RNA sequence: GGGAACGACUCGAGUAGAGUCGAAAAGGUGAUCUGGACGGGAAGUAGCUCCAGCGACUGCUUCCGAAGCUUUGAUAAGAGCAACUCCAUCUACGUUGCUCAAGUAGGUGGUAGCAGCAAACACCGAAGGAUGAUAGUGAUUCGUCACUAUCAUCCUAAAAGAAACAACAACAACAAC
Reactivity to 2A3 in 0.01 (KOAc 150mM, MgCl2 10mM, bicine 150mM(pH8.5), 24C), signal-to-noise 9, nucleotides 027 to 126: g010g000u020g020a110u060c030u080g040g040a030c030g050g020g040a080a040g040u090a010g040c080u020c040c050a040g020c030g130a120c000u000g000c000u020u000c000c000g020a040a000g000c020u120u100u100g170a180u220a170a080g010a000g020c030a030a020c000u030c030c020a080u030c040u050a030c060g100u100u150g060c070u060c100a040a020g010u010a000g000g070u080g010g010u030a000g000c010a000g010c020a050a060a010c010a010c010c010g010a020
Reactivity to DMS in 0.01 (KOAc 150mM, MgCl2 10mM, bicine 150mM(pH8.5), 24C), signal-to-noise 9, nucleotides 027 to 126: g000g020u000g000a110u030c030u000g000g010a160c100g000g010g030a080a080g010u030a060g000c130u010c010c020a020g010c210g000a300c000u000g000c000u000u000c000c000g020a300a190g010c020u010u020u040g010a130u040a110a130g000a030g010c000a040a090c040u010c090c130a090u030c140u030a040c110g000u010u010g010c060u010c060a010a040g000u000a010g010g020u010g010g010u010a030g020c040a050g010c090a110a070a120c030a020c000c000g010a130
This 177-nucleotide RNA was probed chemically with 2A3 and DMS. Conditions: 150 mM KOAc, 10 mM MgCl2 and 150 mM bicine (pH 8.5), 24 C. The DMS profile rests on 24,371 reads. It was measured as part of the RMDB library OK1LIB. For 2A3, 18,420 sequencing reads were counted.